The data come from the RNA Mapping Database (RMDB), library OK2TRN. Structure probing data (DMS) for a 177-nucleotide construct. For DMS the reverse transcriptase was MarathonRT. For DMS, 1,004 sequencing reads were counted.
RNA sequence: GGGAACGACUCGAGUAGAGUCGAAAAGACAUCAUUGCCACCCACUUCAGCGCCACACGCUUUGCCAUCUGGCCCAAGGUGAAGGCAUUCCUGCAGUCGCUGCCGUCUGGGGCUCUGCUGGCGGACGAAAAUACCACCUCUUCGGAGGUGGUAUUUUAAAAGAAACAACAACAACAAC
Reactivity to DMS in 0.01 (KOAc 150mM, MgCl2 10mM, bicine 150mM(pH8.5), 24C), signal-to-noise 1, nucleotides 027 to 126: g020a090c070a030u000c090a150u000u000g020c040c030a180c070c000c070a070c100u000u010c070a110g000c060g030c050c050a050c120a040c070g010c100u000u010u000g020c020c000a020u010c070u010g020g040c020c040c030a050a050g020g010u010g010a100a160g000g000c010a070u000u000c000c060u000g000c050a050g040u000c070g000c060u000g000c200c030g010u000c050u000g010g020g000g000c030u020c090u000g020c040u000g000g040c030g020g000a040c110g000